[RMDB]
RNA sequence: GGGAACGACUCGAGUAGAGUCGAAAAUACCUGUAGGGGGAUGGAAUCUGCUAAAAGUGUUCUGGAGUCGUUCUUGGAUAUCUGCUUGGUAUCUUCUCAAUAUCUUGACCAUCUGUGACAAUUUUAAACACAACAUACUGUUCGCAGUAUGUUGUGUAAAAGAAACAACAACAACAAC
Reactivity to DMS in 0.01 (KOAc 150mM, MgCl2 10mM, bicine 150mM(pH8.5), 24C), signal-to-noise 2, nucleotides 027 to 126: u010a130c000c010u010g010u000a100g000g010g000g010g000a060u000g010g000a060a160u000c030u010g000c040u010a070a110a080a090g010u000g010u010u010c030u010g000g020a030g010u000c000g020u010u010c010u000u010g020g020a050u020a030u000c040u010g010c120u000u000g000g000u000a020u000c040u010u010c050u010c050a030a070u000a050u000c060u000u000g000a070c060c020a040u010c020u010g030u000g010a090c130a060a030u000u010u000u000a150a130
Reactivity to 2A3 in 0.01 (KOAc 150mM, MgCl2 10mM, bicine 150mM(pH8.5), 24C), signal-to-noise 2, nucleotides 027 to 126: u080a030c010c010u060g120u140a110g070g010g000g020g020a020u030g000g030a030a010u010c030u000g010c010u060a040a130a080a110g050u090g080u090u110c070u060g030g000a000g010u000c000g010u000u020c000u010u040g020g000a010u010a050u030c040u110g100c090u180u040g030g000u000a040u030c000u090u020c030u010c000a020a090u020a060u130c050u040u080g050a030c060c010a030u000c010u030g080u030g040a010c010a030a030u130u110u000u120a150a160
The record gives the reactivity of an RNA of 177 nucleotides to DMS and 2A3. The reactions ran in a buffer of 150 mM KOAc, 10 mM MgCl2 and 150 mM bicine (pH 8.5), at 24 C. For DMS, 1,944 sequencing reads were counted. The 2A3 profile rests on 1,222 reads. Reactivities are rounded to 0.1 and cut off at 0 and 3.